Chemical mapping of a 177-nucleotide RNA with DMS and 2A3. 2A3 adducts were read by reverse transcription with SuperScript II with manganese. For DMS, 4,696 sequencing reads were counted. For DMS the reverse transcriptase was MarathonRT. 2A3 is a SHAPE reagent: it acylates the 2'-hydroxyl of flexible nucleotides of all four kinds.
RNA sequence: GGGAACGACUCGAGUAGAGUCGAAAAUUAGUGAUCAUUGGGGAGGAGUUAGGAUCCACCCAGGAGUGGAGUGAUCAAGAGUGCCUUCACUUCUGAUAGCCACAAAGGAAUUAUAGCACCUGAUCCACAGGCUAAAACAAUUCGUUGUUUUAGCCUGAAAAGAAACAACAACAACAAC
Reactivity to DMS in 0.01 (KOAc 150mM, MgCl2 10mM, bicine 150mM(pH8.5), 24C), signal-to-noise 5, nucleotides 027 to 126: u000u010a080g020u000g000a050u000c030a060u010u000g000g000g010g020a100g030g010a060g030u000u010a110g000g000a120u000c040c030a160c090c040c010a040g000g010a060g020u000g000g000a030g010u010g010a060u010c070a100a100g000a120g020u000g010c150c040u010u000c020a030c020u000u010c010u000g010a080u010a080g010c060c030a050c120a060a120a110g010g010a070a070u000u000a070u000a080g000c070a070c030c030u000g000a060u000c020c080a220
Reactivity to 2A3 in 0.01 (KOAc 150mM, MgCl2 10mM, bicine 150mM(pH8.5), 24C), signal-to-noise 3, nucleotides 027 to 126: u110u040a050g040u030g080a040u030c030a060u050u110g020g010g000g000a150g010g000a010g040u080u090a040g090g070a080u000c000c000a030c020c000c000a000g000g000a010g000u010g000g010a040g040u120g020a060u120c050a060a040g130a020g130u090g030c010c000u040u040c010a020c000u010u000c000u030g010a000u040a040g040c000c020a040c050a060a080a030g130g010a080a060u250u070a080u080a100g030c020a030c020c010u040g030a060u010c010c000a020